[RMDB]
RNA sequence: GGGAACGACUCGAGUAGAGUCGAAAACUUCCUAACUCUGAAACCUGGUUUCUGUCACUAUUUCCAGAUGACUGUCUUUCAUGAUAGGAAUACAAUGUUCUUACACCGUUCAGCCUUUACUACCUUUAGUUCCAGACAGCCAGAAUGAUAAUUCUGGGAUCCGAUUUUCUUUCGAGAAAAUCGGAUCAAAAGAAACAACAACAACAAC
Reactivity to 2A3 in 0.01 (KOAc 150mM, MgCl2 10mM, bicine 150mM(pH8.5), 24C), signal-to-noise 3, nucleotides 027 to 156: c010u040u060c010c000u070a140a120c050u040c040u150g060a070a040a060c010c030u070g020g000u030u130u090c060u040g060u040c040a010c100u070a080u100u180u080c030c020a070g060a300u060g040a040c010u040g020u030c010u030u170u080c070a060u100g040a060u050a020g020g050a030a040u110a110c080a120a180u140g050u070u010c020u020u040a040c030a040c100c070g050u020u050c070a020g020c000c000u040u090u050a050c060u050a060c000c000u060u070u070a010g020u090u000c010c010a040g000a070c000a020g160c000c000a010g020a030a020u020g090a040u050a170a090u070u020c000u000g010g020
Annotation: The data come from the RNA Mapping Database (RMDB), library OK3TST. Chemical mapping of a 207-nucleotide RNA with 2A3. For 2A3, 1,003 sequencing reads were counted. The reactions ran in a buffer of 150 mM KOAc, 10 mM MgCl2 and 150 mM bicine (pH 8.5), at 24 C. 2A3 adducts were read by reverse transcription with SuperScript II with manganese.